Structure probing data (2A3 and DMS) for a 177-nucleotide construct. The RNA was probed in 150 mM KOAc, 10 mM MgCl2 and 150 mM bicine (pH 8.5) at 24 C. For DMS the reverse transcriptase was MarathonRT. For 2A3, 43,239 sequencing reads were counted.

RNA sequence: GGGAACGACUCGAGUAGAGUCGAAAACGCCAGUGGCAUGUGAUGCGUACGUUAUGUGCGGACUCGCAUCCUAUAAGCGUAGAUGCGAUGCUCGUAGAUGUGCAAGUGAGUAUCCCUGGUCCUAGCAUCUAGUCUUGGGGUUCGCUCCAAGGCUAGAAAAAGAAACAACAACAACAAC
Reactivity to 2A3 in 0.01 (KOAc 150mM, MgCl2 10mM, bicine 150mM(pH8.5), 24C), signal-to-noise 9, nucleotides 027 to 126: c040g010c010c010a030g030u110g070g010c090a020u040g030u050g040a040u070g030c020g010u030a010c010g020u040u100a090u160g100u040g010c000g020g020a030c010u000c010g000c000a000u010c000c010u070a060u030a080a060g100c080g070u050a020g010a030u020g010c010g010a020u110g000c010u010c010g030u040a040g010a110u050g020u020g020c010a010a050g040u030g030a050g010u030a020u010c000c000c000u000g000g010u010c000c000u010a020g020c010a030
Reactivity to DMS in 0.01 (KOAc 150mM, MgCl2 10mM, bicine 150mM(pH8.5), 24C), signal-to-noise 9, nucleotides 027 to 126: c200g000c000c020a080g010u030g010g010c170a020u000g010u020g000a050u010g000c250g010u000a030c020g010u010u030a070u040g020u020g010c010g000g010a070c080u000c000g000c010a010u000c120c040u000a060u020a090a150g000c200g010u010a050g000a060u010g000c040g000a020u020g020c020u000c000g020u000a060g010a060u010g010u010g000c030a060a140g010u010g000a100g000u010a040u000c010c020c010u000g000g000u000c020c010u000a080g010c160a140